[RMDB]
RNA sequence: GGGAACGACUCGAGUAGAGUCGAAAACGUGCGUCUACGCUUGAUAUACUUGAUGGUAAGGAGCGCUUUGCAUCAGCAGGAGAAAAUAAGACCCUCUGGGGCUUUAACGGAUGUCUUACAGAGCAUGCAGACAGAGUUGAUUCGUCAACUCUGUCUGAAAAGAAACAACAACAACAAC
Reactivity to DMS in 0.01 (KOAc 150mM, MgCl2 10mM, bicine 150mM(pH8.5), 24C), signal-to-noise 3, nucleotides 027 to 126: c070g000u000g010c050g020u010c050u000a110c080g000c030u000u000g020a160u000a080u000a070c080u010u010g010a120u000g010g000u000a060a090g010g020a080g010c040g010c070u000u010u000g010c040a080u010c040a070g010c080a030g030g010a090g000a080a050a080a110u010a050a060g000a070c030c030c020u000c170u010g030g000g000g000c020u000u000u000a050a050c130g010g000a060u000g000u000c030u010u020a060c110a100g020a080g020c100a040u010g010
Reactivity to 2A3 in 0.01 (KOAc 150mM, MgCl2 10mM, bicine 150mM(pH8.5), 24C), signal-to-noise 2, nucleotides 027 to 126: c010g020u030g000c060g080u000c060u090a060c060g020c010u000u060g120a040u090a010u050a240c050u040u130g080a060u100g040g070u050a040a050g080g030a010g030c040g010c010u060u080u060g020c000a040u010c030a010g060c010a030g070g060a040g070a070a090a010a020u160a050a010g060a070c010c020c010u060c070u080g030g010g000g040c000u100u070u030a080a000c030g080g000a030u060g040u040c000u020u050a080c010a010g030a010g010c050a040u150g080
Chemical mapping of a 177-nucleotide RNA with DMS and 2A3. 2A3 adducts were read by reverse transcription with SuperScript II with manganese. For DMS, 2,642 sequencing reads were counted. It was measured as part of the RMDB library OK2TRN. The reactions ran in a buffer of 150 mM KOAc, 10 mM MgCl2 and 150 mM bicine (pH 8.5), at 24 C.